[RMDB]
RNA sequence: GGGAACGACUCGAGUAGAGUCGAAAAAAUCCCCUGAGCCGAUACUAUCACUUUAGGAUAGCGUUCUGCAUAUUUAGAGUGUAUGCCUACCCAGAGUAGGAAACCCAGCAAGUAUGCGUCGCUUCCAUCACAUGUAUGACUUCGGUCAUACAUGUGAAAAAGAAACAACAACAACAAC
Reactivity to DMS in 0.01 (KOAc 150mM, MgCl2 10mM, bicine 150mM(pH8.5), 24C), signal-to-noise 2, nucleotides 027 to 126: a150a080u000c030c020c010c040u000g050a060g010c050c030g010a050u000a070c090u010a050u000c100a130c120u000u000u000a090g050g000a030u000a010g000c000g000u010u000c030u000g040c010a030u000a000u000u000u000a100g000a130g020u000g010u000a020u030g000c000c010u000a020c020c010c210a160g000a150g010u000a030g010g010a000a020a030c010c020c070a130g000c210a060a000g010u000a000u000g000c020g000u000c000g010c020u000u000c000c000a200
Reactivity to 2A3 in 0.01 (KOAc 150mM, MgCl2 10mM, bicine 150mM(pH8.5), 24C), signal-to-noise 2, nucleotides 027 to 126: a000a000u060c040c010c020c020u130g080a020g080c060c030g070a040u040a130c020u090a030u230c070a040c110u120u130u110a060g000g000a020u070a070g010c000g040u090u020c060u180g000c010a010u040a010u010u070u030a110g010a020g080u120g000u020a030u250g030c030c010u010a010c000c020c080a040g020a070g060u000a010g000g000a000a000a010c020c000c000a020g030c030a040a000g010u000a000u010g010c000g010u010c000g000c000u000u030c000c010a010
Chemical mapping of a 177-nucleotide RNA with DMS and 2A3. The reactions ran in a buffer of 150 mM KOAc, 10 mM MgCl2 and 150 mM bicine (pH 8.5), at 24 C. For DMS, 1,383 sequencing reads were counted. DMS adducts were read by reverse transcription with MarathonRT. Source: RMDB library RFMREP, as collected in RNAgym.